[RMDB]
RNA sequence: GGGAACGACUCGAGUAGAGUCGAAAAGAGGGAAAGCUCACACCUGAUCGGAUGCUCGAACUCAAAGCCAGCGCCCUCGGCCUCAUGUGGGCCUACUCCGAACUCGCCGGCCUACCCGCACCAGACGAAAUCAUUGGAGGAACGAAGUGAGCCGAAGGCUGUUAUAUGCAUUCGUGCAUAUAACAGCAAAAGAAACAACAACAACAAC
Reactivity to 2A3 in 0.01 (KOAc 150mM, MgCl2 10mM, bicine 150mM(pH8.5), 24C), signal-to-noise 4, nucleotides 027 to 156: g030a020g000g010g030a010a050a060g020c010u040c020a070c000a030c010c040u060g050a130u110c080g020g010a050u120g030c040u050c100g060a120a060c050u020c140a090a000a040g040c010c010a000g000c010g080c010c000c000u020c030g040g000c020c000u070c040a130u200g040u180g040g000g000c000c010u020a040c020u000c020c020g020a070a070c020u030c040g060c040c000g020g020c000c010u090a090c030c000c040g050c040a060c030c010a070g120a110c050g050a090a060a040u160c060a090u080u210g010g010a010g030g060a050a030c050g010a080a030g020u030g050a000g000c000c030g050a080a010g090
Reactivity to DMS in 0.01 (KOAc 150mM, MgCl2 10mM, bicine 150mM(pH8.5), 24C), signal-to-noise 1, nucleotides 027 to 156: g000a140g040g000g010a120a050a080g020c000u000c030a080c000a160c030c010u000g040a070u000c040g050g010a110u000g020c060u010c020g040a180a130c080u000c050a090a050a150g000c060c010a060g040c020g000c010c000c020u000c040g010g020c020c000u010c090a090u000g010u010g040g030g020c000c000u010a080c000u000c030c020g030a060a060c070u010c020g030c030c000g000g000c010c010u000a140c030c000c010g040c110a070c010c010a060g060a090c010g000a040a070a150u000c040a140u000u030g000g020a020g010g000a080a090c030g000a040a070g000u000g030a080g030c000c040g020a050a080g010